[RMDB]
The record gives the reactivity of an RNA of 177 nucleotides to DMS. The reactions ran in a buffer of 150 mM KOAc, 10 mM MgCl2 and 150 mM bicine (pH 8.5), at 24 C. The data come from the RNA Mapping Database (RMDB), library OK2TRN.
RNA sequence: GGGAACGACUCGAGUAGAGUCGAAAAGCACCGCCGCAGUGCAGCCAACCACCUACCGCACACACGCUGCCCGAGCCUGCUACUGUCGCAGUCGUACCCGGUCCGGGGCCGGACCCGGGUAGGCGUACGGGAUAAAUACCUUCGGGUAUUUAUCCCGAAAAGAAACAACAACAACAAC
Reactivity to DMS in 0.01 (KOAc 150mM, MgCl2 10mM, bicine 150mM(pH8.5), 24C), signal-to-noise 1, nucleotides 027 to 126: g000c070a040c000c070g030c060c010g020c040a110g030u000g030c030a120g010c060c030a060a060c050c020a030c050c080u000a140c080c050g000c030a070c080a070c110a070c070g000c050u000g000c040c040c010g010a110g000c050c030u010g000c050u020a050c020u020g010u010c090g030c090a060g020u000c070g050u010a020c010c010c000g030g000u000c010c020g000g020g000g000c190c050g020g000a070c060c010c010g050g030g000u000a010g010g020c030g020u030a120